The record gives the reactivity of an RNA of 177 nucleotides to DMS and 2A3.
Reactivities are rounded to 0.1 and cut off at 0 and 3.
Reactivities are given for positions 27 through 126.
The RNA was probed in 150 mM KOAc, 10 mM MgCl2 and 150 mM bicine (pH 8.5) at 24 C.
DMS adducts were read by reverse transcription with MarathonRT.
For 2A3 the reverse transcriptase was SuperScript II with manganese.
RNA sequence: GGGAACGACUCGAGUAGAGUCGAAAAGAUAUGGAAUCCACAGGACAUGCUUUGUGGUCGGAAACGACCACUGAGCAACAGCCUGGGAUUCCUAAGUCAAACUCACAUGGGUUCGCCCAUGUGAGAAGAGAGGUAUACGGUUCGCCGUAUACCUCUCAAAAGAAACAACAACAACAAC
Reactivity to DMS in 0.01 (KOAc 150mM, MgCl2 10mM, bicine 150mM(pH8.5), 24C), signal-to-noise 2, nucleotides 027 to 126: g020a000u000a010u020g010g000a040a020u000c000c000a120c020a010g000g010a020c030a300u020g020c000u010u000u000g000u000g010g030u000c010g040g000a010a010a030c000g010a010c010c000a010c000u010g000a010g010c000a130a060c240a110g000c010c010u000g000g000g010a000u000u010c000c000u010a000a030g000u000c010a200a090a260c000u000c000a000c000a000u000g000g010g010u000u010c300g020c000c000c000a000u010g000u000g010a010g010a040a090
Reactivity to 2A3 in 0.01 (KOAc 150mM, MgCl2 10mM, bicine 150mM(pH8.5), 24C), signal-to-noise 3, nucleotides 027 to 126: g000a000u010a000u040g010g000a010a000u030c010c000a170c000a260g040g000a030c180a300u300g010c020u000u000u020g000u020g000g030u000c010g010g000a010a010a000c010g010a000c050c000a000c000u010g010a000g000c020a250a040c070a030g000c000c000u000g030g000g010a000u000u000c000c000u000a000a010g000u000c010a020a040a130c000u000c000a000c000a010u010g030g020g050u110u100c280g120c050c010c000a010u010g000u000g000a000g000a030a010